An RNA of 207 nucleotides, treated with 2A3 and read out base by base. The RNA was probed in 150 mM KOAc, 10 mM MgCl2 and 150 mM bicine (pH 8.5) at 24 C. For 2A3, 887 sequencing reads were counted.
RNA sequence: GGGAACGACUCGAGUAGAGUCGAAAAAAUUAUGCUAGUAGUGGGCAUUGUGCCUGUUUAGUCGGUCAGGUCUGAAAGGAAGCAGCCAGAAUGGGAUUCGAUGGGUCAUUACUAGCAUUAUUCUUAAAAGGUUUGCACUGGUUCGCCAGUGCAAACCCAGCAUGAGAUGGUUCGCCAUCUCAUGCUGAAAAGAAACAACAACAACAAC
Reactivity to 2A3 in 0.01 (KOAc 150mM, MgCl2 10mM, bicine 150mM(pH8.5), 24C), signal-to-noise 1, nucleotides 027 to 156: a000a000u060u060a000u000g000c000u040a000g000u000a000g000u020g000g030g040c000a000u010u030g080u050g020c020c010u030g000u010u020u010a230g030u080c120g000g000u090c000a010g000g030u000c000u100g090a140a070a060g000g000a030a010g010c020a010g020c000c000a000g030a010a010u000g030g010g060a140u100u120c020g000a000u030g000g030g210u040c000a010u020u000a000c000u010a000g000c030a000u000u000a000u000u020c000u050u050a160a120a040a000g010g000u000u000u000g000c000a000c000u000g000g110u050u080c210g090c050c010a000g020u000g000c000a010a020a000c000c000